[RMDB]
RNA sequence: GGGAACGACUCGAGUAGAGUCGAAAACGACCGUGGUGCGGCUCACCUGAAGGACGAGAUCAUGCCGCGCUAUGCCGAGCUGAUCUACAACGGUUUCUGGUAUGCGCCGGAGCGGGAAAUGCUGCAGGCUGACUGGGUACUUCGGUACCCAGUCAGCAAAAGAAACAACAACAACAAC
Reactivity to 2A3 in 0.01 (KOAc 150mM, MgCl2 10mM, bicine 150mM(pH8.5), 24C), signal-to-noise 2, nucleotides 027 to 126: c010g000a000c000c010g000u120g000g120u090g030c000g030g000c040u040c000a060c000c000u110g030a060a010g030g080a080c080g030a000g000a100u030c020a070u300g000c000c050g070c010g070c160u220a150u220g050c040c000g050a100g030c000u030g000a060u030c020u100a020c040a030a020c060g060g000u050u100u030c000u020g020g020u090a060u180g010c070g000c060c020g010g000a090g050c070g000g070g030a000a070a000u190g010c050u020g020c010a080g060
Source: RMDB library OK1LIB, as collected in RNAgym. This 177-nucleotide RNA was probed chemically with 2A3. For 2A3 the reverse transcriptase was SuperScript II with manganese. Conditions: 150 mM KOAc, 10 mM MgCl2 and 150 mM bicine (pH 8.5), 24 C.